[RMDB]
RNA sequence: GGGAACGACUCGAGUAGAGUCGAAAACGCUGGGCACGAUCGAAUCGCAAUGGGAGGGGUAGAAGCCUGAAGCGCGCACGGGCUUCUACCCCGACGAUCAUUGACCCGAUUCGCAGAGUGCCUGUGCUGAAGCGCGCACGGCAACCGAAAGGUGCGAGAUCUCUCUAAAGUUCGCUUUAGAGAGAUCAAAAGAAACAACAACAACAAC
Reactivity to 2A3 in 0.01 (KOAc 150mM, MgCl2 10mM, bicine 150mM(pH8.5), 24C), signal-to-noise 2, nucleotides 027 to 156: c060g000c010u130g000g000g000c000a000c020g050a160u180c010g000a000a000u010c000g020c040a000a000u000g000g000g000a010g000g000g010g000u000a000g000a000a000g010c010c020u040g030a150a030g020c000g000c010g010c000a020c020g000g000g000c000u000u000c000u020a000c010c010c020c020g000a000c000g000a010u030c010a020u020u040g060a100c060c050c050g000a000u010u000c010g060c120a070g030a000g080u020g000c000c010u000g010u030g020c030u100g050a060a010g000c000g000c000g000c010a020c010g060g020c030a090a150c000c010g020a070a030a030g020g000u020g020c010g010a070
Reactivity to DMS in 0.01 (KOAc 150mM, MgCl2 10mM, bicine 150mM(pH8.5), 24C), signal-to-noise 1, nucleotides 027 to 156: c080g020c030u010g000g000g000c000a080c030g000a090u000c020g000a040a020u000c010g000c010a040a040u000g040g000g010a050g050g010g030g010u000a030g000a020a050g000c000c000u000g010a050a120g040c000g030c000g020c020a300c020g000g000g040c010u030u000c000u000a010c000c000c000c000g020a000c050g000a060u000c030a040u010u010g000a170c190c190c180g000a010u000u000c000g000c030a070g000a300g030u010g010c000c000u020g000u010g000c010u000g020a050a070g030c040g020c010g030c010a080c020g010g010c080a160a160c020c030g030a090a220a140g050g030u000g000c040g010a260